[RMDB]
RNA sequence: GGGAACGACUCGAGUAGAGUCGAAAAGUAUGGAUGCCACCGUGACGGCUCAAUCACACAAGUGCCAACGAUAACGAGGCGCUCGCUAUUGCUGCGUAACUGACAGCCUGACGGUCUGACGUUACAAAAAACGAAAAGUGGUUCGCCACUUUUCGAAUCAUAUGCUUACCUUCGGGUAAGCAUAUGAAAAAGAAACAACAACAACAAC
Reactivity to DMS in 0.01 (KOAc 150mM, MgCl2 10mM, bicine 150mM(pH8.5), 24C), signal-to-noise 3, nucleotides 027 to 156: g020u000a110u030g000g000a070u000g010c030c020a130c040c010g010u010g020a220c160g030g000c020u000c040a070a060u000c040a060c090a080c080a100a100g040u000g020c070c000a040a050c030g020a110u000a050a040c040g000a130g030g020c090g040c030u000c010g020c000u000a040u000u000g010c030u000g030c060g010u000a040a050c020u010g000a140c100a060g000c020c020u020g000a110c080g010g020u010c020u020g010a240c120g000u000u000a140c050a000a030a040a070a080a120c010g010a000a010a020a010g020u000g010g010u010u010c300g010c040c000a010c000u000u000u000u010c000g010a020a070
Reactivity to 2A3 in 0.01 (KOAc 150mM, MgCl2 10mM, bicine 150mM(pH8.5), 24C), signal-to-noise 4, nucleotides 027 to 156: g070u050a060u160g010g030a040u090g050c040c030a020c010c030g030u040g030a060c080g010g000c010u040c060a060a130u090c010a030c030a010c030a210a000g020u020g010c020c010a060a030c080g080a100u090a160a030c050g010a050g140g060c050g060c060u030c020g020c010u050a070u170u220g030c060u050g000c020g040u010a080a010c040u050g000a030c020a010g000c000c010u080g050a020c020g000g010u000c030u020g020a030c030g030u040u060a050c040a020a110a030a050a040a010c010g000a010a000a000a000g010u000g010g060u040u050c170g060c050c000a000c000u000u000u000u000c000g000a010a010